[RMDB]
RNA sequence: GGGAACGACUCGAGUAGAGUCGAAAAAAAUCAACUCGGUAUGAUUAGGGUGAGACCUAGGAACCGUAGGGGUAUUCUCAAAGGAAGCUUUUGCAGUGACGCCCAUGUAAGUGGGAUAUAACAACAGAUCAGUUUCGCAGUUUCGACUGCGAAACAAACGCUAUUACAUGUUCGCAUGUAAUAGCGUAAAAGAAACAACAACAACAAC
Reactivity to 2A3 in 0.01 (KOAc 150mM, MgCl2 10mM, bicine 150mM(pH8.5), 24C), signal-to-noise 3, nucleotides 027 to 156: a000a000a040u060c020a030a030c020u020c020g040g020u130a110u130g100a110u140u060a020g000g020g000u020g070a120g030a050c000c010u020a040g050g040a030a010c030c050g040u130a030g010g000g020g000u010a030u070u000c040u010c000a050a060a000g090g020a070a030g040c040u050u070u160u120g080c080a050g000u010g050a010c070g010c010c010c000a020u080g040u100a070a130g010u020g010g000g020a020u010a000u010a120a070c080a000a020c010a030g110a140u090c030a040g010u000u000u000c000g000c000a000g000u020u030u180c150g030a040c020u000g000c010g000a000a000a000c000a000a000
Reactivity to DMS in 0.01 (KOAc 150mM, MgCl2 10mM, bicine 150mM(pH8.5), 24C), signal-to-noise 2, nucleotides 027 to 156: a050a020a060u000c010a040a060c050u010c020g030g020u000a060u000g010a160u000u000a060g000g010g000u000g030a200g010a140c000c000u020a110g000g000a120a030c030c020g020u000a100g000g000g010g020u000a090u000u010c010u000c010a100a120a110g010g000a130a120g040c050u000u020u000u000g040c050a110g010u010g010a140c110g000c000c010c000a000u000g050u000a130a120g010u010g010g070g000a080u000a040u000a100a100c080a060a050c080a080g030a110u000c100a140g020u000u000u000c020g010c000a040g010u000u000u000c180g010a070c010u010g000c000g000a000a010a000c000a050a050